This 177-nucleotide RNA was probed chemically with DMS and 2A3. For DMS, 774 sequencing reads were counted.
[RMDB]
RNA sequence: GGGAACGACUCGAGUAGAGUCGAAAAGAGUAGUAGUUCGCUACUACUCAAAGGCACAAUAGGCACAGUUCUAAAGUGCAUGGAACACGCCAAGUGCCCGUGAAAGUAAAUCCUUCGGGAUUUACAAGUUAUCGUACUCCUUCGGGAGUACGAUAACAAAAGAAACAACAACAACAAC
Reactivity to DMS in 0.01 (KOAc 150mM, MgCl2 10mM, bicine 150mM(pH8.5), 24C), signal-to-noise 1, nucleotides 027 to 126: g000a010g000u000a000g010u000a010g000u000u000c210g050c010u000a000c000u000a000c000u000c000a010a030a130g000g000c000a000c000a150a200u030a170g000g050c010a110c180a220g000u000u000c000u000a020a070a210g030u000g010c140a080u020g010g010a010a040c010a260c130g000c010c040a090a190g000u000g000c020c000c020g020u020g000a120a120a160g000u000a000a010a030u000c000c000u000u040c260g020g010g000a000u000u000u000a000c000a030a190
Reactivity to 2A3 in 0.01 (KOAc 150mM, MgCl2 10mM, bicine 150mM(pH8.5), 24C), signal-to-noise 2, nucleotides 027 to 126: g000a000g000u010a000g000u000a000g000u030u040c200g020c120u010a000c010u000a010c010u000c010a030a040a000g000g000c000a020c010a040a190u140a280g000g050c030a030c040a100g030u020u000c010u060a080a200a090g300u260g080c010a010u080g000g000a000a020c020a000c110g010c010c020a050a040g000u000g010c000c000c020g110u090g140a150a020a010g000u010a000a000a000u010c000c000u010u020c180g080g000g000a000u000u000u000a000c000a010a010

Values are in units of 0.01, from 0 to 300, in steps of 10. The reactions ran in a buffer of 150 mM KOAc, 10 mM MgCl2 and 150 mM bicine (pH 8.5), at 24 C. For 2A3, 1,439 sequencing reads were counted.